[RMDB]
RNA sequence: GGGAACGACUCGAGUAGAGUCGAAAACUGGAAUUACCACAGUGUCGUGUGUCUCCUCCUAUUAAUCCCCAUGUGGAACAGCAGGUAGCCUGAGAAGCCUGAAUUGUGCCUUAGUUCCUGGCCGUGGCUAGGAUCUUAAGUUCGCUUAAGAUCCUAGAAAAGAAACAACAACAACAAC
Reactivity to 2A3 in 0.01 (KOAc 150mM, MgCl2 10mM, bicine 150mM(pH8.5), 24C), signal-to-noise 5, nucleotides 027 to 126: c020u040g020g080a080a050u130u070a120c010c020a030c020a070g080u050g090u180c090g040u070g010u020g050u100c020u030c010c020u050c010c010u070a120u180u110a120a140u090c030c000c000c010a060u140g050u110g060g020a060a020c000a020g040c000a000g040g000u040a020g030c020c020u090g020a080g020a100a010g020c010c000u010g040a060a070u090u050g040u050g020c000c000u030u030a010g010u020u030c000c000u000g030g000c010c030g040u030g030g000
Reactivity to DMS in 0.01 (KOAc 150mM, MgCl2 10mM, bicine 150mM(pH8.5), 24C), signal-to-noise 9, nucleotides 027 to 126: c060u000g010g010a110a090u010u000a100c070c030a080c030a080g020u000g010u000c080g030u000g010u010g010u000c050u000c040c030u010c030c020u000a100u010u010a100a140u010c030c010c010c100a100u000g020u010g010g000a070a060c080a060g000c040a040g000g010u010a070g020c050c040u010g000a090g010a090a120g000c030c030u000g010a060a090u010u000g020u010g000c030c020u000u000a090g010u000u000c010c010u000g010g010c030c050g010u010g010g010